[RMDB]
An RNA of 177 nucleotides, treated with DMS and 2A3 and read out base by base. For 2A3 the reverse transcriptase was SuperScript II with manganese. Conditions: 150 mM KOAc, 10 mM MgCl2 and 150 mM bicine (pH 8.5), 24 C. For DMS, 4,414 sequencing reads were counted.

RNA sequence: GGGAACGACUCGAGUAGAGUCGAAAACAGGUGGAGGGCUUGGCCCAUCCUAGCUCUGGGACCUCUGCAUGCCCUUGGCCCUGGGAGCCUCAGUGUCCUCGUCUGCAGAAUGGAGCUUGGGGCGGGGAAUCUGUAUCGGUUUCGACCGAUACAGAUUAAAAGAAACAACAACAACAAC
Reactivity to DMS in 0.01 (KOAc 150mM, MgCl2 10mM, bicine 150mM(pH8.5), 24C), signal-to-noise 3, nucleotides 027 to 126: c040a050g010g020u000g010g010a060g000g000g020c020u000u000g020g010c020c030c030a140u010c030c030u000a070g010c080u000c060u000g000g000g000a100c060c030u010c030u010g000c050a090u010g010c020c020c020u010u000g010g000c060c010c030u000g000g000g010a120g020c050c030u000c070a070g000u000g000u000c010c020u000c060g010u000c050u000g000c060a060g000a080a110u000g020g010a260g010c030u000u010g010g010g000g020c000g000g000g000g000
Reactivity to 2A3 in 0.01 (KOAc 150mM, MgCl2 10mM, bicine 150mM(pH8.5), 24C), signal-to-noise 2, nucleotides 027 to 126: c030a020g000g020u080g050g100a070g030g040g010c040u090u100g110g020c030c020c010a030u090c000c020u020a050g000c020u040c030u050g050g030g140a170c000c050u090c020u050g000c020a040u140g030c030c020c000u050u040g070g000c020c000c000u030g040g020g060a090g050c020c000u040c010a060g050u050g100u160c010c030u000c040g020u010c060u130g000c030a020g070a120a050u140g040g050a080g050c000u040u070g050g010g000g040c010g000g020g000g000